The record gives the reactivity of an RNA of 177 nucleotides to DMS and 2A3.
The 2A3 profile rests on 1,621 reads.
The RNA was probed in 150 mM KOAc, 10 mM MgCl2 and 150 mM bicine (pH 8.5) at 24 C.
Source: RMDB library OK2TRN, as collected in RNAgym.
For DMS the reverse transcriptase was MarathonRT.
RNA sequence: GGGAACGACUCGAGUAGAGUCGAAAAGCACGGCGGGCCCGGCAGGAGUGGCUGGCUGAGCGGCUCGCGACGCUGAACCGCAGCGAGCGUGACAUCCUGCGCAGCGCCGCCGAUCUGAUGCUGGCUCGUGGAGCCAGUGGUUCGCCACUGGCUCCACAAAAGAAACAACAACAACAAC
Reactivity to DMS in 0.01 (KOAc 150mM, MgCl2 10mM, bicine 150mM(pH8.5), 24C), signal-to-noise 2, nucleotides 027 to 126: g010c060a070c060g030g000c000g010g020g030c020c240c080g000g010c020a030g010g010a100g000u000g010g010c000u000g010g010c040u010g020a130g020c010g020g050c030u000c010g000c030g020a080c240g010c040u030g020a030a050c030c040g020c000a090g000c040g000a080g020c010g000u010g020a060c100a130u000c010c020u010g020c020g040c300a100g000c040g010c010c020g020c010c030g000a030u010c110u000g000a130u000g010c010u000g020g020c040u010c050
Reactivity to 2A3 in 0.01 (KOAc 150mM, MgCl2 10mM, bicine 150mM(pH8.5), 24C), signal-to-noise 2, nucleotides 027 to 126: g000c000a020c030g010g000c020g020g020g020c020c060c090g050g020c000a000g040g010a020g060u100g090g000c010u030g100g000c030u070g150a040g080c000g000g040c030u020c030g010c030g080a090c080g040c150u110g010a060a030c020c060g000c010a010g020c010g140a010g010c020g050u130g040a020c010a300u030c010c010u000g010c020g000c000a040g000c080g040c010c000g010c000c000g000a030u010c040u210g040a100u160g020c000u000g060g010c010u010c090